The data come from the RNA Mapping Database (RMDB), library 15KLIB. Chemical mapping of a 170-nucleotide RNA with 2A3 and DMS. Values are in units of 0.01, from 0 to 300, in steps of 10. The DMS profile rests on 11,396 reads. DMS adducts were read by reverse transcription with MarathonRT. Conditions: 150 mM KOAc, 10 mM MgCl2 and 150 mM bicine (pH 8.5), 24 C.
RNA sequence: GGGAACGACUCGAGUAGAGUCGAAAAUUGGUCUUUUAUUGGGGGGUACACUCGAGGAGUGGAAGGCGGGGAGGCGGGGUUCCCGGGCUUACCUACGGGAACUGCUGGUUUCCCCUUAUGUCCAGUCAGAGAUGUCCGUUCGCGGACAUCAAAAGAAACAACAACAACAAC
Reactivity to 2A3 in 0.01 (KOAc 150mM, MgCl2 10mM, bicine 150mM(pH8.5), 24C), signal-to-noise 3, nucleotides 027 to 129: u060u030g070g000u040c020u010u070u020u080a210u160u090g000g000g000g000g000g000u040a040c020a020c010u030c040g050a040g030g040a030g010u120g020g010a020a000g050g010c030g000g000g000g000a040g020g000c050g000g000g000g000u040u000c000c000c010g000g000g010c000u090u070a050c000c040u020a050c020g000g000g070a020a010c000u110g140c000u050g060g010u020u030u060c000c030c000c010u070u110a050u100g040u000c000c020a020g010u030c000a000g040a000
Reactivity to DMS in 0.01 (KOAc 150mM, MgCl2 10mM, bicine 150mM(pH8.5), 24C), signal-to-noise 4, nucleotides 027 to 129: u050u030g040g010u010c000u010u040u020u100a130u060u040g000g000g000g000g000g000u010a010c090a000c050u020c040g030a130g090g020a070g040u060g000g020a010a060g020g040c300g020g040g020g020a000g010g020c050g060g060g000g000u010u010c030c010c000g020g000g020c140u000u000a000c220c100u040a070c030g000g000g000a030a030c070u020g000c000u020g010g020u000u050u000c000c000c000c010u040u030a050u110g030u020c020c020a110g030u050c070a090g030a200